[RMDB]
RNA sequence: GGGAACGACUCGAGUAGAGUCGAAAAUAUUUGAAGCGUUGAUGUUUGCCGUAGCGUUUGCGACUUUAAUCAUCGCGGUGCUGUCGUUUCAUGAAAAAAAAUAAUCCACCCUUGAGUUAGCGGCUCAUUACUUGUUGAAAUUCGUUUCAACAAGUAAAAAAGAAACAACAACAACAAC
Reactivity to 2A3 in 0.01 (KOAc 150mM, MgCl2 10mM, bicine 150mM(pH8.5), 24C), signal-to-noise 8, nucleotides 027 to 126: u170a050u040u150u120g060a040a010g020c020g030u050u040g060a080u050g090u050u130u110g050c020c020g020u040a020g020c030g040u020u030u170g010c000g010a040c010u130u160u140a070a030u110c060a020u030c030g000c020g010g010u030g010c030u040g030u070c020g010u020u020u020c050a060u130g150a070a020a010a000a000a000a000a010u160a030a060u020c020c000a040c030c010c000u010u050g030a030g070u060u050a030g030c040g030g000c000u010c000a010
Reactivity to DMS in 0.01 (KOAc 150mM, MgCl2 10mM, bicine 150mM(pH8.5), 24C), signal-to-noise 7, nucleotides 027 to 126: u020a060u020u010u020g010a100a100g000c090g010u000u000g010a060u000g010u000u010u000g010c020c020g010u010a050g010c040g010u010u010u030g020c010g010a030c060u000u010u030a080a100u020c210a110u000c020g020c030g010g000u000g000c050u000g000u010c030g010u000u000u000c020a070u020g000a000a000a010a020a070a050a090a090u020a050a090u010c060c040a070c040c010c030u000u010g010a080g010u000u010a080g010c060g000g010c020u000c040a130